The data come from the RNA Mapping Database (RMDB), library M2RFPK. The record gives the reactivity of an RNA of 207 nucleotides to DMS and 2A3. The DMS profile rests on 4,057 reads. For 2A3 the reverse transcriptase was SuperScript II with manganese.
RNA sequence: GGGAACGACUCGAGUAGAGUCGAAAAGCUAUGGUGCAACUCUUUAAGGCAAUAACGAACUAAUUCUAAGCAAGUAAUGGAGAAAUGCCAGGCUCACUAUCUAGCCAUAAUAGUGCUUGACAGUAUGAGAAUCUGCUACCCUUCGGGGUAGCAGAAAGUUCUAAGUACUGUUCGCAGUACUUAGAACAAAAGAAACAACAACAACAAC
Reactivity to DMS in 0.01 (KOAc 150mM, MgCl2 10mM, bicine 150mM(pH8.5), 24C), signal-to-noise 2, nucleotides 027 to 156: g030c030u000a100u000g010g020u000g040c030a040a120c050u000c020u000u000u000a100a140g020g010c030a070a080u000a100a080c070g000a120a130c020u000a070a110u000u000c050u000a070a140g050c000a080a080g020u000a100a160u010g020g000a120g000a080a060a080u000g000c020c000a100g010g010c030u000c040a020c040u000a030u000c030u000a050g020c150c050a160u000a070a110u010a100g010u010g010c050u000u000g020a060c020a050g050u020a050u000g010a140g000a060a170u000c020u010g000c010u000a010c000c000c000u000u010c300g060g010g010g040u010a000g000c000a000g010a000a020a100
Reactivity to 2A3 in 0.01 (KOAc 150mM, MgCl2 10mM, bicine 150mM(pH8.5), 24C), signal-to-noise 3, nucleotides 027 to 156: g010c020u060a120u160g010g000u060g060c010a110a210c020u020c000u070u160u100a080a090g060g000c030a090a110u120a120a030c080g050a030a010c060u090a130a030u150u080c040u110a110a040g050c010a020a120g060u120a080a040u070g030g000a030g010a070a090a010u050g010c030c000a000g010g000c000u020c040a010c010u010a020u080c040u080a030g030c000c010a030u070a250a090u060a200g110u090g080c020u030u040g020a020c010a020g030u070a070u130g080a060g040a060a060u030c000u000g000c010u000a000c000c000c000u010u030c070g070g000g000g000u000a000g020c000a000g000a000a000a000